About this RNA: The record gives the reactivity of an RNA of 177 nucleotides to 2A3 and DMS. It was measured as part of the RMDB library OK2TRN. For DMS the reverse transcriptase was MarathonRT.
[RMDB]
RNA sequence: GGGAACGACUCGAGUAGAGUCGAAAACAAUCGCACCAGCCUUGGCCAUAUGUUUCGUUUCCUCGUCGCUCAUAUGGGUUGCGUGAAUGAGACACCAGCGCGCCGUCACAUCCUGAUGAUCCAGAAAAUGGAUCACUGAUUUCGAUCAGUGAUCCAUAAAAGAAACAACAACAACAAC
Reactivity to 2A3 in 0.01 (KOAc 150mM, MgCl2 10mM, bicine 150mM(pH8.5), 24C), signal-to-noise 1, nucleotides 027 to 126: c000a000a120u130c070g000c060a040c010c030a050g040c000c030u070u040g040g020c000c000a060u060a030u150g020u000u030u060c020g000u000u070u000c010c020u070c010g010u000c020g060c000u080c050a100u080a190u300g020g000g050u010u040g000c020g030u060g030a040a050u100g010a040g040a040c030a050c030c010a010g010c000g030c000g000c030c000g020u010c010a020c010a090u040c000c010u050g070a130u080g000a020u070c030c010a020g100a050a100a030
Reactivity to DMS in 0.01 (KOAc 150mM, MgCl2 10mM, bicine 150mM(pH8.5), 24C), signal-to-noise 2, nucleotides 027 to 126: c060a140a080u020c060g030c050a080c010c050a090g020c040c020u000u000g000g020c060c050a020u000a040u010g000u000u000u000c060g010u000u000u000c060c060u010c070g070u000c060g010c060u000c060a080u030a110u010g010g020g010u000u000g030c080g010u010g020a060a060u000g000a110g020a060c010a070c070c060a090g030c050g010c080g020c060c030g010u000c050a030c070a090u010c020c030u000g000a100u000g000a070u000c020c020a130g030a080a070a110